RNA sequence: GGGAACGACUCGAGUAGAGUCGAAAAGAUAUGGAGUGAGCUACCCACCAACUGACUCCGAAGAACAUGAUUCUAUCGGAAACGAUAGAAUCAUGGGAGGAGGAGGUUGAGGCUCACUCCUAAGUCAGAUAUGCGAGUAGUUCGCUACUCGCAUAUCAAAAGAAACAACAACAACAAC
Reactivity to DMS in 0.01 (KOAc 150mM, MgCl2 10mM, bicine 150mM(pH8.5), 24C), signal-to-noise 2, nucleotides 027 to 126: g000a140u010a230u000g010g020a050g040u000g040a000g020c000u020a150c050c000c040a300c090c050a020a000c000u010g000a240c000u000c000c030g050a080a160g000a170a180c020a010u010g000a030u000u010c010u000a000u000c010g030g010a130a070a180c010g050a000u000a000g000a000a000u010c000a020u020g010g000g000a090g020g000a050g000g000a300g020g000u000u000g010a050g030g020c000u000c000a030c000u000c000c030u000a020a070g000u010c130a050
Reactivity to 2A3 in 0.01 (KOAc 150mM, MgCl2 10mM, bicine 150mM(pH8.5), 24C), signal-to-noise 1, nucleotides 027 to 126: g140a050u290a170u300g000g000a050g000u000g000a010g040c030u150a300c040c040c020a010c020c000a010a000c000u050g060a020c000u000c000c020g050a160a020g000a080a000c000a000u000g000a000u030u000c020u020a000u010c020g030g130a160a050a090c000g020a010u010a000g000a020a000u020c000a000u010g030g000g020a040g020g000a030g040g000a020g000g000u000u000g000a010g040g000c000u000c000a010c000u000c000c000u000a010a010g040u090c140a030
Structure probing data (DMS and 2A3) for a 177-nucleotide construct. For DMS, 1,063 sequencing reads were counted. Conditions: 150 mM KOAc, 10 mM MgCl2 and 150 mM bicine (pH 8.5), 24 C. Reactivities are given for positions 27 through 126. For DMS the reverse transcriptase was MarathonRT.